[RMDB]
RNA sequence: GGGAACGACUCGAGUAGAGUCGAAAAUUAAAGCUGCAAUUUUUCAUUAUGACAGUUACAUUAGGCUUAAAAAAAGUCUCCAAAUAUAUUGCACCGCCAUCAGAUCUUACUGAAGUGUUAGAUUAAAGCAUAAUGAUAUGUUCGCAUAUCAUUAUGCAAAAGAAACAACAACAACAAC
Reactivity to 2A3 in 0.01 (KOAc 150mM, MgCl2 10mM, bicine 150mM(pH8.5), 24C), signal-to-noise 9, nucleotides 027 to 126: u090u040a070a040a020g020c020u020g030c060a130a160u030u020u040u080u210c080a090u080u250a070u130g090a110c030a050g070u060u100a060c020a070u020u090a030g010g000c020u050u050a090a030a100a040a020a010a010g020u020c020u000c030c010a030a180a010u170a010u030a080u070u100g010c010a010c020c040g050c030c000a030u040c000a040g020a070u020c010u050u090a060c020u070g140a140a070g120u070g030u100u050a030g010a110u070u140a070a060a010
Reactivity to DMS in 0.01 (KOAc 150mM, MgCl2 10mM, bicine 150mM(pH8.5), 24C), signal-to-noise 3, nucleotides 027 to 126: u030u020a010a070a090g010c040u000g000c080a020a060u020u000u020u040u010c120a100u010u020a070u030g000a090c040a030g010u040u000a110c130a090u010u010a090g000g000c010u000u000a010a000a090a080a060a040a040g030u000c030u000c050c040a050a080a050u040a070u020a030u030u000g010c000a030c030c040g000c020c030a030u000c050a050g020a030u010c040u000u000a040c100u000g010a060a080g000u000g000u010u020a030g010a150u020u010a070a080a130